This 207-nucleotide RNA was probed chemically with 2A3 and DMS. It was measured as part of the RMDB library RNAMAK. The RNA was probed in 150 mM KOAc, 10 mM MgCl2 and 150 mM bicine (pH 8.5) at 24 C. The 2A3 profile rests on 2,907 reads. Reactivities are given for positions 27 through 156. The DMS profile rests on 3,993 reads.

RNA sequence: GGGAACGACUCGAGUAGAGUCGAAAACAUCUCUUCGGAGAUGCACAUGACCUUUGUGCCUGCAAGUCAGCGAUAAGCAGAUUUGGUCCCAUUGGGACCAUGUCUGCUUUUGACGCUGUCACCAGGCACUCUGGUAGUCGAUAGGAUUCGUCCUAAAAACUCGAAGAUAGUUCGCUAUCUUCGAGUUAAAAGAAACAACAACAACAAC
Reactivity to 2A3 in 0.01 (KOAc 150mM, MgCl2 10mM, bicine 150mM(pH8.5), 24C), signal-to-noise 4, nucleotides 027 to 156: c000a010u010c010u000c000u030u070c250g150g010a010g000a010u030g070c020a050c000a150u240g060a020c000c020u010u010u010g000u010g000c010c010u000g030c020a190a300g030u000c000a000g000c000g040a040u010a050a000g000c000a010g000a010u000u000u010g000g010u010c010c000c070a300u270u300g010g000g010a020c000c000a000u000g000u000c000u000g010c000u000u000u000u000g000a010c000g000c010u010g000u000c010a010c050c000a000g000g000c000a000c000u000c000u000g080g000u030a100g110u050c080g150a140u100a070g020g000a020u050u050c160g070u040c040c030u120a100a110a050
Reactivity to DMS in 0.01 (KOAc 150mM, MgCl2 10mM, bicine 150mM(pH8.5), 24C), signal-to-noise 2, nucleotides 027 to 156: c000a020u000c010u010c000u010u020c300g060g000a010g000a020u000g010c010a060c040a160u020g070a020c020c010u040u030u000g070u000g000c000c010u010g010c020a100a130g000u000c010a000g020c000g030a160u000a030a020g010c010a020g000a010u000u000u010g020g010u010c010c000c020a300u010u020g040g000g010a010c000c010a000u020g090u000c010u000g000c000u000u000u000u000g020a300c140g000c030u000g020u000c030a130c160c000a030g000g000c000a000c010u000c000u020g010g020u000a060g000u000c040g000a220u000a050g000g010a100u000u000c170g000u000c020c000u010a030a060a170